[RMDB]
RNA sequence: GGGAACGACUCGAGUAGAGUCGAAAACUGGCACAGGCCCUGACGGUGUGACGGUCAUCACUGGUGAGAGCUUGGCGUACAUGACCUAUGGCCGCUUCCUUGUGGAUCCGGAGACGAAUCUGCGGGGCGUCCUGAUCGUAUUCGUACGAUCAGGACGAAAAGAAACAACAACAACAAC
Reactivity to DMS in 0.01 (KOAc 150mM, MgCl2 10mM, bicine 150mM(pH8.5), 24C), signal-to-noise 1, nucleotides 027 to 126: c080u010g010g010c050a060c050a090g020g000c000c010c060u000g020a050c000g010g010u000g020u000g020a120c080g000g000u000c050a080u000c090a020c050u000g000g030u000g010a100g020a040g030c020u020u000g000g000c140g010u000a040c110a050u000g000a080c070c090u000a100u010g030g010c050c010g010c110u000u000c000c000u000u010g040u000g010g010a030u010c000c000g020g010a260g000a230c020g010a020a020u000c020u000g040c030g010g000g000g030
Reactivity to 2A3 in 0.01 (KOAc 150mM, MgCl2 10mM, bicine 150mM(pH8.5), 24C), signal-to-noise 1, nucleotides 027 to 126: c010u020g070g020c020a020c020a120g070g000c000c000c040u060g010a020c000g010g080u070g000u050g060a100c050g040g010u060c020a030u080c010a010c010u080g060g000u060g110a110g010a020g030c000u000u050g030g020c000g030u060a040c020a080u090g030a020c010c030u080a100u090g060g010c010c000g010c060u080u030c020c010u040u070g010u010g000g010a000u000c010c010g000g000a040g020a040c000g020a020a040u040c000u030g000c000g010g010g000g000